[RMDB]
RNA sequence: GGGAACGACUCGAGUAGAGUCGAAAAGUCAUGCCUUCGGGCAUGACAGGUACCGAGAGGUACCAAAUAGCGUACAGGAGACUCAGACUGUACGCUAAAAAAGUGUGUGUUCAAUAAGUGCCAAUUGAACACACACUAAAAUGGUACAAGAGUGUUACAUUUAUACUGGGUUCGCCCAGUAUAAAUGAAAAGAAACAACAACAACAAC
Reactivity to 2A3 in 0.01 (KOAc 150mM, MgCl2 10mM, bicine 150mM(pH8.5), 24C), signal-to-noise 4, nucleotides 027 to 156: g000u000c010a000u010g000c000c010u030u040c200g040g000g000c000a000u000g000a000c000a000g000g020u000a010c020c020g030a040g000a010g090g000u010a010c000c000a020a020a020u060a000g010c010g000u000a000c000a000g020g060a060g080a140c030u020c100a020g040a120c000u020g010u000a000c000g000c000u010a010a010a000a010a000a000g000u000g010u010g000u000g010u000u000c020a010a000u110a190a040g110u110g210c070c040a020a020u000u000g000a000a000c000a000c040a000c010a000c020u000a000a010a000a010u090g070g020u080a040c030a110a030g060a030g120u050g040u060u070a030
Reactivity to DMS in 0.01 (KOAc 150mM, MgCl2 10mM, bicine 150mM(pH8.5), 24C), signal-to-noise 1, nucleotides 027 to 156: g020u020c000a020u000g000c010c000u010u010c300g040g000g000c010a040u000g000a020c000a020g020g030u010a090c000c040g030a300g000a300g010g010u010a010c000c010a000a050a140u000a010g000c030g010u000a020c020a010g010g000a230g030a150c110u020c060a090g000a230c030u000g010u000a000c000g010c000u000a000a030a050a130a040a020g050u010g050u010g010u000g010u000u000c000a000a000u000a010a080g000u010g000c060c060a140a070u030u010g010a000a020c000a000c010a010c020a000c030u000a010a020a100a110u000g010g000u000a040c010a050a040g000a100g040u010g000u000u010a200
Chemical mapping of a 207-nucleotide RNA with 2A3 and DMS.
For DMS, 2,585 sequencing reads were counted.
For 2A3 the reverse transcriptase was SuperScript II with manganese.
The data come from the RNA Mapping Database (RMDB), library OK3TST.
The RNA was probed in 150 mM KOAc, 10 mM MgCl2 and 150 mM bicine (pH 8.5) at 24 C.